The record gives the reactivity of an RNA of 177 nucleotides to DMS and 2A3. 2A3 adducts were read by reverse transcription with SuperScript II with manganese. The reactions ran in a buffer of 150 mM KOAc, 10 mM MgCl2 and 150 mM bicine (pH 8.5), at 24 C.
RNA sequence: GGGAACGACUCGAGUAGAGUCGAAAAGAGGAAAUACAUACCGGUACGGCUCACGGUGCGGCAGUGUGGAGACCUGUUGUAAAGCGCGGCGCCCAUCGCGGUACCGCGUGAGAACGCAUCCGCGGAGAAUUACACUCAAGUUCGCUUGAGUGUAAUUAAAAGAAACAACAACAACAAC
Reactivity to DMS in 0.01 (KOAc 150mM, MgCl2 10mM, bicine 150mM(pH8.5), 24C), signal-to-noise 9, nucleotides 027 to 126: g010a100g010g000a070a070a080u020a080c120a100u020a100c060c030g010g000u010a070c080g000g000c040u000c040a090c060g000g000u000g010c040g010g000c070a040g010u010g010u010g000g010a090g000a090c090c030u010g000u000u000g010u010a050a090a230g000c010g010c020g000g010c040g010c010c000c010a120u030c240g000c090g000g010u010a100c060c040g010c010g020u000g000a090g010a100a080c040g010c030a060u010c040c050g000c040g010g000a090g010
Reactivity to 2A3 in 0.01 (KOAc 150mM, MgCl2 10mM, bicine 150mM(pH8.5), 24C), signal-to-noise 9, nucleotides 027 to 126: g090a020g040g090a050a080a010u200a080c090a040u150a070c020c020g010g030u060a040c050g030g000c010u020c020a030c020g020g000u050g010c020g030g000c020a030g020u020g020u050g130g030a040g020a060c000c020u020g020u060u040g080u110a060a060a020g000c000g000c010g010g000c010g010c010c010c010a150u170c070g020c140g020g010u020a060c000c010g000c010g000u030g010a020g020a030a010c030g000c020a030u050c030c030g000c030g020g000a070g030